An RNA of 207 nucleotides, treated with DMS and 2A3 and read out base by base. Reactivities are given for positions 27 through 156. The 2A3 profile rests on 3,091 reads. DMS adducts were read by reverse transcription with MarathonRT. Conditions: 150 mM KOAc, 10 mM MgCl2 and 150 mM bicine (pH 8.5), 24 C.
[RMDB]
RNA sequence: GGGAACGACUCGAGUAGAGUCGAAAACUACGUUGAUUCGUCAACGUAGAAAAACCGUAGGCGUCUCUGUACAGCAACAGCCAAGCUUCGAAAGAGGCUUGGACAUGCUGGUAGGAGAGCGCCUAAACGGAAAAAUAGCAAGUUUCGACUUGCUAAAUUACUAUGACAGAUUCGUCUGUCAUAGUAAAAAAGAAACAACAACAACAAC
Reactivity to DMS in 0.01 (KOAc 150mM, MgCl2 10mM, bicine 150mM(pH8.5), 24C), signal-to-noise 2, nucleotides 027 to 156: c010u000a000c000g010u000u000g000a060u000u020c250g010u000c000a010a010c000g020u000a000g000a030a030a090a130a130c000c020g040u000a080g000g010c010g020u000c000u000c000u000g010u010a300c010a080g030c000a050a100c080a220g020c010c000a000a020g000c010u000u010c000g020a190a160a270g020a030g010g020c000u010u000g010g020a020c040a120u000g000c000u000g030g030u000a300g010g010a030g040a090g020c010g040c020c000u000a000a010a110c010g030g010a020a100a050a080a240u000a020g010c010a000a020g010u000u000u000c300g000a100c000u010u000g020c010u000a000a030a070
Reactivity to 2A3 in 0.01 (KOAc 150mM, MgCl2 10mM, bicine 150mM(pH8.5), 24C), signal-to-noise 3, nucleotides 027 to 156: c000u010a000c000g010u000u010g020a040u050u090c130g030u010c150a000a000c010g000u020a010g020a020a020a000a010a010c020c000g020u030a000g000g010c000g100u020c030u030c030u150g300u300a060c000a010g020c010a020a070c020a070g040c000c000a000a000g000c010u010u000c010g090a100a110a060g000a010g020g000c000u000u000g000g010a030c010a060u020g000c010u010g020g000u030a010g000g020a020g010a060g040c000g010c000c000u000a010a020a000c000g000g110a120a040a000a050a080u040a000g000c000a000a010g030u010u120u220c190g160a030c010u000u000g000c000u000a000a000a000